Record summary:
Source: RMDB library M2PK90, as collected in RNAgym. An RNA of 177 nucleotides, treated with DMS and 2A3 and read out base by base. The DMS profile rests on 3,259 reads.
[RMDB]
RNA sequence: GGGAACGACUCGAGUAGAGUCGAAAACACAUGCCAUCAUAUCGGUUAAGAACUCUUAACUCUGAUGGCUUUCGAGUUAUGUGGUGCAUUGAAGCUCUGCCUUCAAUUCAACGUACCGUUCCGUCAACUUCACAUGGUACUUCGGUACCAUGUGAAGAAAAGAAACAACAACAACAAC
Reactivity to DMS in 0.01 (KOAc 150mM, MgCl2 10mM, bicine 150mM(pH8.5), 24C), signal-to-noise 4, nucleotides 027 to 126: c090a080c160a090u010g000c000c000a010u000c000a050u000a110u010c290g010g000u000u000a000a000g000a300a120c300u000c010u000u000a000a010c000u000c090u000g000a030u000g010g000c000u000u000u000c030g010a080g020u010u010a050u010g020u010g010g010u000g010c100a020u000u000g000a000a010g000c010u010c260u000g000c160c010u010u000c020a020a020u000u000c070a050a040c020g000u000a010c060c020g010u000u000c000c000g000u010c070a050a160
Reactivity to 2A3 in 0.01 (KOAc 150mM, MgCl2 10mM, bicine 150mM(pH8.5), 24C), signal-to-noise 3, nucleotides 027 to 126: c080a010c010a050u160g000c040c000a010u000c010a020u070a070u270c080g030g000u000u010a020a010g070a300a240c060u030c000u300u010a010a000c010u020c030u080g000a000u000g000g000c000u010u000u020c000g000a000g000u090u050a060u180g080u060g110g000u040g000c000a000u000u010g010a010a010g010c010u020c190u300g060c100c000u000u000c000a000a010u030u070c020a070a030c040g030u030a020c020c010g000u000u010c000c020g130u140c060a070a050